[RMDB]
Structure probing data (2A3 and DMS) for a 177-nucleotide construct. In probing experiments dimethyl sulfate is read out at A N1 and C N3, which are open when not base-paired. The RNA was probed in 150 mM KOAc, 10 mM MgCl2 and 150 mM bicine (pH 8.5) at 24 C.
RNA sequence: GGGAACGACUCGAGUAGAGUCGAAAACUAGUACUAGUACUCGGAUCGUACUAUCAUACGUACUGCGUGACGCGGCGCGGCGCGCACGCACACGAUCGGCCGUACUGCGAGCGAUCCGAUCGAUCGAAGGCUACACAAGAUUCGUCUUGUGUAGCCUAAAAGAAACAACAACAACAAC
Reactivity to 2A3 in 0.01 (KOAc 150mM, MgCl2 10mM, bicine 150mM(pH8.5), 24C), signal-to-noise 3, nucleotides 027 to 126: c020u010a030g120u130a050c030u020a030g100u040a030c030u030c040g070g000a040u010c030g020u060a050c040u060a100u140c060a070u040a110c070g060u020a050c040u060g020c010g020u010g060a150c010g010c010g090g000c090g000c040g210g000c000g000c010g030c050a030c040g030c000a000c000a000c020g040a090u040c030g020g000c040c010g030u040a050c090u100g050c070g080a030g010c020g010a000u000c000c010g010a030u020c020g010a010u090c040g030a060
Reactivity to DMS in 0.01 (KOAc 150mM, MgCl2 10mM, bicine 150mM(pH8.5), 24C), signal-to-noise 4, nucleotides 027 to 126: c110u000a070g010u000a060c130u000a050g020u010a090c070u000c040g020g010a050u000c040g010u010a090c040u000a110u010c150a150u000a110c120g020u000a100c170u000g000c000g020u000g040a130c040g020c000g010g000c040g030c030g000g000c080g000c010g010c020a010c020g000c010a070c150a080c050g010a050u000c050g010g020c240c050g020u000a040c130u000g000c120g010a120g000c040g010a030u010c000c020g000a080u000c040g000a060u000c100g000a100
The DMS profile rests on 3,453 reads.